The record gives the reactivity of an RNA of 177 nucleotides to DMS and 2A3. The 2A3 profile rests on 12,999 reads. For DMS the reverse transcriptase was MarathonRT. 2A3 adducts were read by reverse transcription with SuperScript II with manganese.
RNA sequence: GGGAACGACUCGAGUAGAGUCGAAAAAUACGGUGUUCAUCCCGCGCCUCGUGAACACCAACAUCAGCGGCGACGUAUUCGGUGUCCUUGUCGCUGCUGCAGCCGGUGAGGGCAGUGCCGUGGCCACACGUAGAAUGUACUUCGGUACAUUCUACGUAAAAGAAACAACAACAACAAC
Reactivity to DMS in 0.01 (KOAc 150mM, MgCl2 10mM, bicine 150mM(pH8.5), 24C), signal-to-noise 6, nucleotides 027 to 126: a070u000a060c150g010g010u000g000u010u000c010a050u000c050c030c060g020c080g020c020c020u000c130g000u010g000a020a020c020a010c000c000a120a090c210a090u010c030a010g010c010g000g010c010g010a020c020g020u000a110u000u010c100g010g020u010g010u010c040c050u010u000g010u000c010g010c010u000g000c020u000g000c170a060g010c040c030g010g020u000g010a120g000g010g000c030a070g010u000g010c040c040g020u010g010g010c020c050a090c180
Reactivity to 2A3 in 0.01 (KOAc 150mM, MgCl2 10mM, bicine 150mM(pH8.5), 24C), signal-to-noise 5, nucleotides 027 to 126: a000u180a050c070g000g010u010g010u010u020c020a030u050c020c030c000g020c030g030c010c010u050c040g030u020g010a010a010c010a010c080c010a010a060c040a090u140c020a000g010c000g010g020c020g010a010c030g070u090a170u090u220c090g070g040u090g070u140c010c040u030u100g020u000c010g000c010u000g000c010u010g020c010a010g030c000c020g080g030u090g030a090g030g020g000c020a010g050u050g010c020c000g020u050g030g000c030c010a050c000